[RMDB]
An RNA of 177 nucleotides, treated with DMS and 2A3 and read out base by base.
RNA sequence: GGGAACGACUCGAGUAGAGUCGAAAAGAUAUGGAAGACAGCGAUAAGCUAUACUGGAUCGGAAACGAUCUUAUAGCUUUUGACGCUGUAUUCCUAAGUCAAAGAUCUAUGGUUCGCCAUAGAUCAACGGUGUCAAUAGGUUCGCCUAUUGACACCGAAAAGAAACAACAACAACAAC
Reactivity to DMS in 0.01 (KOAc 150mM, MgCl2 10mM, bicine 150mM(pH8.5), 24C), signal-to-noise 2, nucleotides 027 to 126: g020a060u000a160u000g020g020a000a030g000a020c000a000g000c000g000a080u020a000a010g030c000u000a010u000a040c300u020g000g000a000u000c000g000g000a050a030a130c020g010a020u000c010u000u000a000u000a040g000c000u000u000u000u010g000a210c090g000c000u010g000u000a020u000u000c000c000u000a030a120g000u000c010a100a060a110g000a010u000c000u000a000u000g000g020u010u010c280g000c000c000a010u000a000g000a000u000c020a020a070
Reactivity to 2A3 in 0.01 (KOAc 150mM, MgCl2 10mM, bicine 150mM(pH8.5), 24C), signal-to-noise 1, nucleotides 027 to 126: g010a010u070a020u090g000g000a010a000g010a030c000a000g010c000g020a090u040a300a000g000c000u000a000u010a020c170u130g000g030a010u010c000g000g000a010a010a030c000g000a000u000c010u000u000a000u010a000g000c000u080u020u080u110g040a010c000g020c000u000g000u000a010u010u010c000c000u010a040a010g020u000c060a230a000a110g000a010u020c000u010a010u010g020g070u060u090c300g100c080c000a030u020a010g000a000u000c010a000a010

DMS adducts were read by reverse transcription with MarathonRT.
The 2A3 profile rests on 3,599 reads.
The reactions ran in a buffer of 150 mM KOAc, 10 mM MgCl2 and 150 mM bicine (pH 8.5), at 24 C.